[RMDB]
RNA sequence: GGGAACGACUCGAGUAGAGUCGAAAAAUCGAAAGCAGCAUAUUUUCACAACAUUCGUCAUCGCAAGAACGGCCUACUCGAAGCAUUGCUCUCCUCUAUGUGAUGACUUCGGUUUCCGUGCUCGGCAGGAUUUAGUGACGUUCGCGUCACUAAAUCCAAAAGAAACAACAACAACAAC
Reactivity to 2A3 in 0.01 (KOAc 150mM, MgCl2 10mM, bicine 150mM(pH8.5), 24C), signal-to-noise 3, nucleotides 027 to 126: a000u060c020g010a030a000a000g060c050a000g040c030a040u040a140u110u160u130u090c130a140c000a070a120c050a100u120u140c000g040u040c040a110u040c000g030c040a010a040g040a060a040c030g020g000c020c070u010a040c020u060c060g000a040a010g040c030a050u000u110g010c000u030c030u020c110c000u040c040u050a100u130g040u000g100a070u020g110a180c000u010u030c030g030g010u000u040u000c010c010g060u040g000c000u030c060g050g000c040a050